Overview: This 177-nucleotide RNA was probed chemically with DMS. The DMS profile rests on 895 reads. The reactions ran in a buffer of 150 mM KOAc, 10 mM MgCl2 and 150 mM bicine (pH 8.5), at 24 C. High DMS reactivity at an A or C suggests that its Watson-Crick edge is free.
RNA sequence: GGGAACGACUCGAGUAGAGUCGAAAAGAUAUGGAUUGCGGGAGCCUUGACCUACCCACCCAGCACAAAAUUCUCGGAAACGAGAAUUUUGUGCUGGAGGGUCGGGCGAAGAACGCAAUCCUAAGUCCAUGCUUAUUCUCUUCGGAGAAUAAGCAUGAAAAGAAACAACAACAACAAC
Reactivity to DMS in 0.01 (KOAc 150mM, MgCl2 10mM, bicine 150mM(pH8.5), 24C), signal-to-noise 1, nucleotides 027 to 126: g010a150u000a160u030g010g000a020u000u000g020c010g020g000g000a100g040c010c010u000u010g040a020c010c010u000a130c050c040c020a300c300c010c000a010g060c000a000c000a050a020a060a000u020u000c000u000c000g010g010a110a210a280c000g030a020g010a020a000u000u000u000u000g010u000g000c030u000g030g000a030g000g030g000u000c000g010g000g020c010g030a140a180g000a110a100c030g000c000a010a000u000c010c010u000a020a100g030u010c140